Chemical mapping of a 177-nucleotide RNA with DMS and 2A3. For DMS the reverse transcriptase was MarathonRT. The DMS profile rests on 28,181 reads. For 2A3 the reverse transcriptase was SuperScript II with manganese. The reactions ran in a buffer of 150 mM KOAc, 10 mM MgCl2 and 150 mM bicine (pH 8.5), at 24 C. Reactivities are rounded to 0.1 and cut off at 0 and 3.
RNA sequence: GGGAACGACUCGAGUAGAGUCGAAAAGAAUCUCAGACUCAGUUACAAGCGAUGCGUCAAAGGUAAUUAAGAGCGAAUGAUUGCCCUCUUGCUUAAUAUCAACGCGAAUAAUGCCCUGCACCUGCUGAUCUACGAAUAAAUUCGUUUAUUCGUAGAUAAAAGAAACAACAACAACAAC
Reactivity to DMS in 0.01 (KOAc 150mM, MgCl2 10mM, bicine 150mM(pH8.5), 24C), signal-to-noise 9, nucleotides 027 to 126: g000a130a090u000c020u000c040a150g010a120c080u010c060a090g010u000u000a060c100a070a080g010c150g010a050u000g020c080g010u000c080a060a180a090g000g010u000a030a040u000u010a060a070g010a260g010c030g010a070a070u010g000a060u000u000g010c040c050c040u000c080u000u000g000c070u000u000a050a070u000a060u000c060a040a170c080g010c030g010a120a110u010a050a050u000g000c020c010c020u000g010c050a050c040c020u000g020c070u000g000
Reactivity to 2A3 in 0.01 (KOAc 150mM, MgCl2 10mM, bicine 150mM(pH8.5), 24C), signal-to-noise 9, nucleotides 027 to 126: g020a040a090u020c020u010c050a020g040a120c020u020c070a040g030u050u100a060c030a090a020g000c030g060a040u060g030c050g100u090c050a050a040a030g040g010u060a140a070u080u060a100a030g030a000g050c030g060a080a100u130g040a050u020u100g030c000c030c000u040c050u040u100g030c010u070u130a070a030u070a070u170c020a030a040c020g010c010g040a040a020u090a070a020u060g010c000c000c020u030g010c010a030c020c010u060g020c030u030g040